[RMDB]
RNA sequence: GGGAACGACUCGAGUAGAGUCGAAAAUCACGAUCACUCACGAUCGUACGAGUACUCACGUACACACGUUCUCGUGAGAACGAGAUCGUGUACGAACGAGAUCGUUCGAUCGAUCGAGUUCUCUCACGAUCGUGUGUGAGAGAGUACGAGUGUUCACCGUCCUUUGUUUAUUCGUAAACAAAGGACGAAAAGAAACAACAACAACAAC
Reactivity to 2A3 in 0.01 (KOAc 150mM, MgCl2 10mM, bicine 150mM(pH8.5), 24C), signal-to-noise 9, nucleotides 027 to 156: u120c020a010c030g010a010u010c010a030c160u150c030a090c160g000a010u010c010g000u020a030c060g030a020g010u020a010c000u010c010a050c070g100u130a010c030a000c010a000c030g040u140u070c050u010c070g000u010g010a040g010a020a000c000g000a000g000a030u010c010g000u050g080u150a070c010g010a010a000c020g010a030g080a290u300c020g010u010u010c010g010a090u030c000g000a010u010c010g000a010g010u050u000c050u000c000u000c050a000c030g020a050u130c030g010u020g010u010g000u000g000a060g000a000g000a000g010u010a020c020g000a040g000u070g050u030u050c040a040c090
Reactivity to DMS in 0.01 (KOAc 150mM, MgCl2 10mM, bicine 150mM(pH8.5), 24C), signal-to-noise 3, nucleotides 027 to 156: u000c030a040c030g010a110u010c010a150c100u000c090a180c100g020a010u010c010g040u000a030c030g000a200g000u000a030c000u000c000a190c070g010u000a040c010a030c010a070c030g020u000u010c020u000c040g010u000g010a190g000a110a010c030g000a220g020a000u000c030g030u000g010u030a030c010g020a050a090c040g010a190g030a130u000c030g020u000u000c070g000a090u000c000g000a020u000c010g000a300g030u010u000c020u000c010u000c020a050c020g010a050u000c060g030u000g020u000g030u010g030a030g000a080g000a040g020u000a020c030g000a150g000u000g010u000u010c000a170c080
Chemical mapping of a 207-nucleotide RNA with 2A3 and DMS.
The RNA was probed in 150 mM KOAc, 10 mM MgCl2 and 150 mM bicine (pH 8.5) at 24 C.
Values cover nucleotides 27 to 156.
It was measured as part of the RMDB library OK3TST.